[RMDB]
RNA sequence: GGGAACGACUCGAGUAGAGUCGAAAACAGUGUGCCCACCGCGAACAAACUCACUGCCGUCAAGGUGGGACAGACGCAAAUCAAAGCGAUUACGCCCAGCCUGCAUCCACCCUCGCUGGCGGCAAUAAGUACCACUCGUAUUCGUACGAGUGGUACUAAAAGAAACAACAACAACAAC
Reactivity to 2A3 in 0.01 (KOAc 150mM, MgCl2 10mM, bicine 150mM(pH8.5), 24C), signal-to-noise 2, nucleotides 027 to 126: c020a010g080u040g030u120g160c000c010c000a030c020c010g000c040g050a100a040c050a150a110a030c050u070c120a090c100u040g020c000c000g030u030c010a080a070g000g010u000g000g020g000a010c000a010g020a000c010g010c000a020a160a000u140c050a140a020a020g030c000g050a050u100u200a050c080g020c050c000c000a010g000c020c010u020g000c010a040u020c010c010a050c030c050c010u060c060g020c070u050g000g010c000g000g020c010a010a040u060a030
Reactivity to DMS in 0.01 (KOAc 150mM, MgCl2 10mM, bicine 150mM(pH8.5), 24C), signal-to-noise 2, nucleotides 027 to 126: c110a080g000u000g030u000g020c040c010c000a090c120c060g000c150g000a030a090c180a020a080a080c120u020c110a090c080u000g000c050c030g040u020c000a060a130g000g020u000g000g000g060a020c090a040g000a080c050g010c090a050a030a080u010c160a050a070a140g050c130g010a160u000u000a110c070g000c000c050c060a050g000c110c000u010g000c050a040u010c040c040a060c000c020c060u020c130g040c070u010g020g010c020g000g000c010a020a020u000a020